[RMDB]
RNA sequence: GGGAACGACUCGAGUAGAGUCGAAAAUUACCAGAAAAUCCGGCUACUAUAAUAGGCUCAUCGAUGAUCAUUGGUAAAAUCCUAUAUUGUACCAGAUUAAUGAGAGCAUAUUUCAUUUCCAAUAAUAAUUUACGAGGUUAUUCGUAACUUCGUAAAUAAAAGAAACAACAACAACAAC
Reactivity to 2A3 in 0.01 (KOAc 150mM, MgCl2 10mM, bicine 150mM(pH8.5), 24C), signal-to-noise 6, nucleotides 027 to 126: u030u020a050c010c000a010g110a060a160a010a040u040c030c030g020g050c030u050a030c030u050a080u050a300a080u030a060g040g000c010u010c030a240u030c110g070a050u080g020a020u050c030a130u040u130g000g010u030a070a060a000a090u050c010c020u080a080u030a030u170u080g020u010a010c000c010a010g010a040u010u020a070a070u130g020a020g000a010g050c030a040u030a050u070u050u060c020a040u030u050u020c010c010a040a040u190a210a030u170a050
Reactivity to DMS in 0.01 (KOAc 150mM, MgCl2 10mM, bicine 150mM(pH8.5), 24C), signal-to-noise 7, nucleotides 027 to 126: u000u010a140c060c060a150g000a110a100a110a080u000c060c050g010g020c100u000a070c090u000a060u000a040a040u000a030g000g010c080u000c050a080u000c020g010a110u010g010a040u000c030a100u000u010g010g010u010a030a060a030a070u000c170c160u010a090u000a080u000u000g010u000a020c010c010a050g000a020u000u000a050a100u010g010a060g000a040g010c030a030u000a020u000u000u010c080a080u000u000u000c020c020a060a120u010a060a100u000a090
An RNA of 177 nucleotides, treated with 2A3 and DMS and read out base by base. The reactions ran in a buffer of 150 mM KOAc, 10 mM MgCl2 and 150 mM bicine (pH 8.5), at 24 C. Reactivities are given for positions 27 through 126. The 2A3 profile rests on 7,339 reads.